[RMDB]
RNA sequence: GGGAACGACUCGAGUAGAGUCGAAAAUAGAAAACCCAACGCCAACACCUACAGAACCUAAACCGCCUAGUGCUUCCAUUCAACAAGCUUUAUCCCAUAUUAAAUCAUUCAUGGGUAACACCAUAGGCAAUGGACAAUGUUAUGGGUUAUGUGCUGAUAAAAGAACACAGUUCGCUGUGUUCUUUUAAAAAGAAACAACAACAACAAC
Reactivity to 2A3 in 0.01 (KOAc 150mM, MgCl2 10mM, bicine 150mM(pH8.5), 24C), signal-to-noise 4, nucleotides 027 to 156: u180a030g120a030a080a020a040c020c000c000a040a010c070g020c020c020a030a010c010a040c030c000u050a020c020a070g060a060a060c030c020u080a160a060a060c060c030g030c020c010u030a030g040u030g100c010u050u010c030c020a110u060u120c040a070a070c030a090a040g020c000u080u080u060a050u080c020c010c000a010u040a020u050u180a120a210a110u060c020a030u070u030c020a020u020g000g000g040u010a020a010c060a040c060c000a010u020a070g130g000c030a020a020u070g030g020a040c060a080a040u050g020u100u060a030u080g000g010g000u020u040a060u100g080u060g030c010u020g010a060
Reactivity to DMS in 0.01 (KOAc 150mM, MgCl2 10mM, bicine 150mM(pH8.5), 24C), signal-to-noise 4, nucleotides 027 to 156: u000a150g000a110a080a120a180c020c010c010a070a110c080g010c010c010a040a080c070a030c030c020u010a210c020a110g010a080a090c040c020u000a070a100a090c030c050g020c020c030u000a080g020u000g010c030u000u000c020c010a090u000u000c060a070a070c050a070a070g030c050u000u000u000a100u010c010c010c010a100u000a100u010u000a080a120a110u000c060a060u000u000c070a040u000g020g000g000u000a050a100c150a120c020c010a080u010a070g020g020c070a070a060u000g010g010a070c030a060a110u010g020u000u000a040u000g000g010g000u010u000a060u010g020u000g010c000u000g010a240